This 177-nucleotide RNA was probed chemically with DMS.

RNA sequence: GGGAACGACUCGAGUAGAGUCGAAAAAAAGCCAGUCCGUUAUUAGGCGAAAAAGGUUGUGAAACCAACGGUUUUAACUAUUUCGACAAAAUCGCCUUCUGGAAAACGCCUAUAGCAGAAGGGGGCAUCGGUGAUGCAUAUUCGUAUGCAUCACCGAAAAAGAAACAACAACAACAAC
Reactivity to DMS in 0.01 (KOAc 150mM, MgCl2 10mM, bicine 150mM(pH8.5), 24C), signal-to-noise 1, nucleotides 027 to 126: a000a090a140g000c020c010a160g020u000c080c020g020u000u000a020u000u000a030g030g010c000g020a010a040a030a110a140g000g000u010u000g000u000g000a210a000a030c030c000a090a160c030g000g000u000u000u000u010a020a150c180u030a090u000u000u020c090g000a060c200a020a070a050a120u000c030g000c000c010u040u010c090u000g010g010a050a050a070a160c020g000c010c020u000a050u010a070g000c020a000g000a030a070g000g000g010g030g000c190a050
Description: Source: RMDB library OK2TST, as collected in RNAgym. The DMS profile rests on 690 reads. For DMS the reverse transcriptase was MarathonRT. The reactions ran in a buffer of 150 mM KOAc, 10 mM MgCl2 and 150 mM bicine (pH 8.5), at 24 C.